[RMDB]
RNA sequence: GGGAACGACUCGAGUAGAGUCGAAAAUCCGAAAGUCAGUAAAAUAAGUUUCGGACAUGCGUUAUAAUUCGGACAUCCAUUUCGUACGGAAAGUUUCCUAUGUCACGAGUUUUUGCUUACUGCCGGGCUACUUUCUGUCGUUCGCGACAGAAAGUAGAAAAGAAACAACAACAACAAC
Reactivity to DMS in 0.01 (KOAc 150mM, MgCl2 10mM, bicine 150mM(pH8.5), 24C), signal-to-noise 1, nucleotides 027 to 126: u010c010c000g010a050a070a040g000u020c000a030g030u000a030a010a110a160u000a050a050g010u000u000u000c000g020g020a040c080a070u000g020c300g000u000u000a030u000a020a300u000u000c000g010g020a010c040a070u030c190c170a100u020u010u010c160g010u000a060c080g000g000a000a020a300g000u000u000u000c010c030u010a000u000g010u000c030a070c020g000a020g000u000u000u030u000u000g000c130u000u000a060c010u010g000c240c010g000g030g000
Reactivity to 2A3 in 0.01 (KOAc 150mM, MgCl2 10mM, bicine 150mM(pH8.5), 24C), signal-to-noise 1, nucleotides 027 to 126: u040c010c010g010a070a010a000g000u010c020a000g020u020a000a000a040a140u110a140a050g110u030u170u140c000g040g000a000c010a000u040g040c000g020u040u060a060u020a040a110u060u060c000g020g000a010c010a040u070c070c040a060u060u190u150c060g000u030a020c020g000g040a010a000a010g010u010u010u020c010c010u050a020u010g010u000c050a040c300g000a000g000u030u030u040u000u000g020c010u020u010a020c010u010g000c000c000g040g020g000